[RMDB]
RNA sequence: GGGAACGACUCGAGUAGAGUCGAAAAGAGAUCCGCAAGACGUAGGCACCUAAACUACAAAGGAUCAUUGGGUGAGCAUCGAAGCCAUCAAGAGGCGUCUUGAGAUGCAAAAGAUCCGAGAGGAUCAGGUAUGCAACAGCUUCGGCUGUUGCAUACCAAAAGAAACAACAACAACAAC
Reactivity to DMS in 0.01 (KOAc 150mM, MgCl2 10mM, bicine 150mM(pH8.5), 24C), signal-to-noise 1, nucleotides 027 to 126: g000a170g000a000u020c000c000g050c150a050a060g040a060c210g000u000a010g000g000c000a000c100c030u040a180a040a150c000u000a060c190a100a080a000g000g000a050u000c000a040u000u120g000g050g000u000g000a300g000c000a000u030c020g000a050a110g050c060c110a140u000c080a170a140g000a200g000g000c010g000u000c080u020u000g000a300g000a020u140g020c020a000a010a010a010g000a060u000c000c000g000a190g030a280g000g000a050u000c000a010
Reactivity to 2A3 in 0.01 (KOAc 150mM, MgCl2 10mM, bicine 150mM(pH8.5), 24C), signal-to-noise 2, nucleotides 027 to 126: g070a000g000a000u030c020c000g040c090a080a010g090a060c150g030u010a040g020g010c040a040c000c020u010a150a100a050c040u120a000c030a000a200a090g030g000a020u020c000a120u110u140g000g010g000u060g020a030g000c000a000u020c030g030a060a070g070c050c020a030u110c020a070a050g070a050g250g000c030g130u000c000u060u180g040a140g000a030u070g010c010a020a030a030a030g000a000u000c000c000g020a020g000a010g070g000a000u010c000a010